Chemical mapping of a 177-nucleotide RNA with 2A3.
The RNA was probed in 150 mM KOAc, 10 mM MgCl2 and 150 mM bicine (pH 8.5) at 24 C.
[RMDB]
RNA sequence: GGGAACGACUCGAGUAGAGUCGAAAAAGGAAGACAGUGAGUGGACGGAAUAAAUCCCCUUCCCACCUCCCCACUGUCCACUCACUGUCUUCCGAUAAGGAAAUAUAAAUCGGGGGUGGGAAGGGGAACCUACCGUGGAUUUCGAUCCACGGUAGGUAAAAGAAACAACAACAACAAC
Reactivity to 2A3 in 0.01 (KOAc 150mM, MgCl2 10mM, bicine 150mM(pH8.5), 24C), signal-to-noise 1, nucleotides 027 to 126: a000g000g000a000a000g000a020c020a030g000u000g040a020g010u020g020g000a010c020g020g060a020a070u130a180a070a100u120c000c000c000c000u000u000c000c000c000a000c000c000u050c010c170c060c040a110c010u000g000u010c000c000a040c000u000c000a000c020u000g020u000c000u000u000c000c010g040a010u000a000a000g100g020a030a080a000u260a010u030a100a090a020u280c060g010g000g000g000g000u030g000g000g000a000a000g000g000g000g000a000
Reactivities are given for positions 27 through 126. It was measured as part of the RMDB library OK1LIB.